[RMDB]
RNA sequence: GGGAACGACUCGAGUAGAGUCGAAAAUUCGGCGUCCGCUGCCUCAUGCCAGCGAGCCUUGAUGACGUAGCGCCACGCCCGGUGGUUACCGGUGACGACCAUCGGUGAGUUGGUCAUGUUCGGCAGGUCCAUCCUCAAUUUUCGAAUUGAGGAUGGAAAAAGAAACAACAACAACAAC
Reactivity to DMS in 0.01 (KOAc 150mM, MgCl2 10mM, bicine 150mM(pH8.5), 24C), signal-to-noise 5, nucleotides 027 to 126: u010u000c070g020g000c100g000u000c060c040g000c000u000g010c010c010u000c030a020u000g010c050c010a020g010c020g010a300g010c000c010u020u020g030a020u000g010a170c070g010u000a110g020c090g010c030c010a060c060g000c110c040c010g010g010u010g020g000u000u010a060c040c030g010g000u010g020a060c020g000a090c050c000a010u000c000g000g000u000g000a300g010u000u000g000g010u000c030a010u000g000u010u010c210g000g000c040a030g010g010
Reactivity to 2A3 in 0.01 (KOAc 150mM, MgCl2 10mM, bicine 150mM(pH8.5), 24C), signal-to-noise 2, nucleotides 027 to 126: u060u020c040g050g030c020g050u040c040c020g020c060u000g000c010c000u040c010a010u020g000c010c010a000g010c010g020a000g010c000c000u040u200g010a030u020g020a010c070g010u060a040g020c020g020c060c050a030c050g050c000c040c000g080g020u070g030g210u100u150a040c020c020g070g020u050g060a040c020g010a030c020c040a010u020c000g020g000u030g010a010g000u020u010g030g000u080c020a010u030g050u120u160c080g010g010c010a000g000g030